RNA sequence: GGGAACGACUCGAGUAGAGUCGAAAAACGCUGCCGCAGAGGGUGAUGUGGGGAUGUUUAUCACGCUGACCGCGCCGUCAAAGUAUCACCCAACACGUCAGGUCAGAAAAGGCGAAAGCAAAACCGUCCAGCUAAAUCACGGCUGGAAUGAUGAGGCCCCUCAUUAACUCUUCGGAGUUAAUGAGGGAAAAGAAACAACAACAACAAC
Reactivity to 2A3 in 0.01 (KOAc 150mM, MgCl2 10mM, bicine 150mM(pH8.5), 24C), signal-to-noise 1, nucleotides 027 to 156: a000c020g000c010u020g000c010c000g010c020a030g050a020g040g000g020u000g010a010u040g040u050g000g050g000g040a010u040g070u080u200u050a200u190c090a010c070g040c070u040g040a080c040c000g050c060g090c170c030g100u170c030a080a060a040g030u110a070u050c030a030c000c000c000a030a000c020a000c000g040u010c000a020g000g030u050c050a050g080a020a100a020a010g080g040c060g120a110a000a000g030c020a000a080a070a020c010c080g020u040c010c000a000g000c010u080a210a200a140u240c070a090c080g010g000c000u000g000g030a000a070u010g000a010u090g020a030g110g000c000